[RMDB]
About this RNA: Structure probing data (DMS and 2A3) for a 207-nucleotide construct. The RNA was probed in 150 mM KOAc, 10 mM MgCl2 and 150 mM bicine (pH 8.5) at 24 C. The data come from the RNA Mapping Database (RMDB), library M2RFPK. For DMS the reverse transcriptase was MarathonRT. 2A3 adducts were read by reverse transcription with SuperScript II with manganese.
RNA sequence: GGGAACGACUCGAGUAGAGUCGAAAAGUUCGCAUGGUGCACUAUUGUGUUAUUAGUAACUAAGUUAGCUUACAAUCGAAAAUGUUUAACCAUAAAAGGGUAAAAUGGUGUAAGACAGUCUGAUACUUUACGGCUUCACGUUUCGACGUGAAGCCAACCAUGCUAUACGCUUCGGCGUAUAGCAUGGAAAAGAAACAACAACAACAAC
Reactivity to DMS in 0.01 (KOAc 150mM, MgCl2 10mM, bicine 150mM(pH8.5), 24C), signal-to-noise 1, nucleotides 027 to 156: g020u020u000c040g090c010a280u000g010g000u000g000c060a080c040u000a150u000u010g030u010g030u000u000a040u010u000a060g000u020a030a120c030u000a080a100g000u000u010a040g050c070u000u000a050c060a040a140u000c100g010a060a110a060a210u000g010u000u000u010a030a030c000c030a020u010a090a090a120a200g030g020g020u010a010a040a060a050u020g020g010u010g030u000a030a010g030a030c060a050g000u000c040u000g000a100u000a040c010u000u000u010a160c020g030g010c000u000u000c000a010c000g050u010u000u000c300g010a090c010g030u010g000a010a010g010c000c010a010a000
Reactivity to 2A3 in 0.01 (KOAc 150mM, MgCl2 10mM, bicine 150mM(pH8.5), 24C), signal-to-noise 2, nucleotides 027 to 156: g040u040u090c040g010c070a020u050g020g010u030g020c040a010c070u110a100u180u120g050u000g010u030u080a070u050u020a050g050u060a030a010c030u010a130a060g100u060u030a020g000c000u030u180a090c060a100a090u080c050g060a140a000a010a020u050g020u020u060u070a040a000c030c000a020u100a140a190a010a000g040g000g020u070a020a000a000a080u070g020g000u000g010u020a050a010g050a050c040a020g030u000c040u060g070a050u030a270c020u060u120u030a060c100g000g000c000u000u000c000a000c000g000u000u110u090c190g070a020c000g000u000g000a000a000g000c010c000a000a000